Chemical mapping of a 207-nucleotide RNA with 2A3. Conditions: 150 mM KOAc, 10 mM MgCl2 and 150 mM bicine (pH 8.5), 24 C.
RNA sequence: GGGAACGACUCGAGUAGAGUCGAAAAGCUGACGAUGCGGAGGGUUCACGAUGGGCAAGCUUGACAUUCCGAUCAGUGAGCACCGCAAGAUUCGACGCAGCCCCGAGGUGCAGGCGCGGCUGCGUUCGAUCGCGUCCGACGUGGCGCGGCGGGCCGGGGGUACAGAGUACUUCGGUACUCUGUACCCAAAAGAAACAACAACAACAAC
Reactivity to 2A3 in 0.01 (KOAc 150mM, MgCl2 10mM, bicine 150mM(pH8.5), 24C), signal-to-noise 1, nucleotides 027 to 156: g020c020u030g020a040c030g010a040u100g010c000g010g050a060g040g210g070u080u050c010a060c120g020a140u110g010g000g060c100a040a010g030c050u080u080g040a080c020a130u090u120c040c060g090a070u020c030a090g070u020g050a030g030c060a110c080c000g000c000a000a030g020a050u000u160c000g000a000c010g000c000a000g000c000c000c000c000g010a040g020g160u230g050c100a010g040g000c000g010c040g010g000c000u000g000c010g010u030u040c000g010a010u000c000g000c000g000u020c000c010g160a100c050g180u230g020g000c000g000c010g010g040c000g030g020g140c000c000g060g000
2A3 adducts were read by reverse transcription with SuperScript II with manganese.